[RMDB]
RNA sequence: GGGAACGACUCGAGUAGAGUCGAAAAGGUGAUGACUUGGAAAUAUUCAAGCUCAACAGACCGUAAUGUAGGAUUUUUCCUAGUGGAAAGUCUUGCGUGUGUCGAUAAUCCCGCUGAACUGAGCGAUUACGCAGUUGCGUUUCGACGCAACUGCGUAAAAAGAAACAACAACAACAAC
Reactivity to 2A3 in 0.01 (KOAc 150mM, MgCl2 10mM, bicine 150mM(pH8.5), 24C), signal-to-noise 1, nucleotides 027 to 126: g010g010u010g000a000u030g030a130c000u000u110g010g030a000a180a110u210a160u200u100c000a000a000g070c080u000c000a000a010c120a000g000a000c000c000g130u120a050a080u010g010u000a000g020g030a010u020u000u000u160u160c000c000u010a010g130u150g300g000a000a020a000g060u000c000u000u000g000c050g000u000g030u030g050u110c070g000a000u000a070a040u000c000c000c000g000c050u040g080a000a170c000u000g030a030g110c120g090a110u000
Background:
The record gives the reactivity of an RNA of 177 nucleotides to 2A3. For 2A3 the reverse transcriptase was SuperScript II with manganese. Source: RMDB library RFM100, as collected in RNAgym.